An RNA of 177 nucleotides, treated with 2A3 and DMS and read out base by base. The 2A3 profile rests on 4,284 reads. Reactivities are given for positions 27 through 126.

[RMDB]
RNA sequence: GGGAACGACUCGAGUAGAGUCGAAAAGGAAGCAAUUCUGCAGAGACAUCUCCACCCUGGGGUGGCGUCGCCAGAAUACACCGACCCGUUACAGGGAAAUUGGCUACUUGGCUGGACAACUACGUCUGUUACGACAUUUGUUCGCAAAUGUCGUAACAAAAGAAACAACAACAACAAC
Reactivity to 2A3 in 0.01 (KOAc 150mM, MgCl2 10mM, bicine 150mM(pH8.5), 24C), signal-to-noise 5, nucleotides 027 to 126: g080g030a060a000g050c050a030a070u060u050c030u070g030c030a010g060a010g030a140c010a090u070c060u010c050c000a050c020c010c000u110g080g000g000g020u040g020g030c060g000u020c010g010c030c010a030g040a050a030u080a050c050a020c030c030g080a070c000c010c010g010u070u100a050c060a080g020g020g040a020a060a080u140u060g050g000c010u040a030c040u110u090g060g010c020u020g030g010a030c020a040a020c130u110a030c110g080u040c030u040
Reactivity to DMS in 0.01 (KOAc 150mM, MgCl2 10mM, bicine 150mM(pH8.5), 24C), signal-to-noise 3, nucleotides 027 to 126: g020g010a170a070g020c100a080a050u010u000c020u000g000c150a210g010a140g000a030c030a110u010c120u020c010c000a050c040c020c060u010g000g010g000g050u010g010g010c260g000u020c070g000c120c010a030g000a090a040u000a120c170a070c050c040g010a120c020c000c000g010u000u030a080c140a090g000g010g000a030a080a040u020u000g000g000c010u010a040c060u000u000g000g000c050u000g010g000a040c070a080a070c100u020a050c130g000u020c040u010